[RMDB]
RNA sequence: GGGAACGACUCGAGUAGAGUCGAAAAAGACAUUAUUCUCACAUUCAUUUUUAUUUAGCUUCACAACAAUCCUGUAAGAUACAUACUACUACUAUUCUUUUGGAGACAAUAAAAUUGAGGUUCAGAGUAGUUGAAUGACUUCCUUAAGGCCAUGGAGGCGUAAGUAUUGGUUCGCCAAUACUUACGCAAAAGAAACAACAACAACAAC
Reactivity to 2A3 in 0.01 (KOAc 150mM, MgCl2 10mM, bicine 150mM(pH8.5), 24C), signal-to-noise 2, nucleotides 027 to 156: a020g050a020c000a060u040u080a010u060u060c000u030c010a090c030a030u110u100c040a080u040u060u070u080u120a160u020u120u030a070g030c020u090u110c050a070c010a150a050c000a030a150u090c020c030u060g030u080a110a020g060a090u030a070c030a060u110a050c010u010a000c010u020a040c010u030a150u090u130c060u020u090u040u050g080g000a050g000a010c040a050a040u060a090a050a050a030u040u060g050a010g060g000u080u070c070a000g000a010g060u080a000g000u030u070g060a080a030u050g010a070c010u070u030c000c000u030u070a060a010g040g000c000c000a010u020g020g040a010g030
Reactivity to DMS in 0.01 (KOAc 150mM, MgCl2 10mM, bicine 150mM(pH8.5), 24C), signal-to-noise 1, nucleotides 027 to 156: a150g000a160c080a040u000u010a050u010u000c040u010c020a070c050a060u000u000c050a130u000u000u000u000u000a040u040u020u000a090g050c030u000u000c050a090c030a050a060c050a030a080u010c050c000u010g000u010a010a080g030a190u010a110c060a090u010a140c060u000a050c030u000a020c100u000a100u000u000c050u000u000u000u000g010g000a060g000a040c080a050a030u000a010a040a060a100u010u000g010a020g020g050u000u010c030a040g020a070g000u000a050g050u000u000g020a090a110u010g040a080c050u000u000c040c030u070u010a050a080g010g020c010c020a100u010g000g010a070g010
An RNA of 207 nucleotides, treated with 2A3 and DMS and read out base by base. 2A3 adducts were read by reverse transcription with SuperScript II with manganese.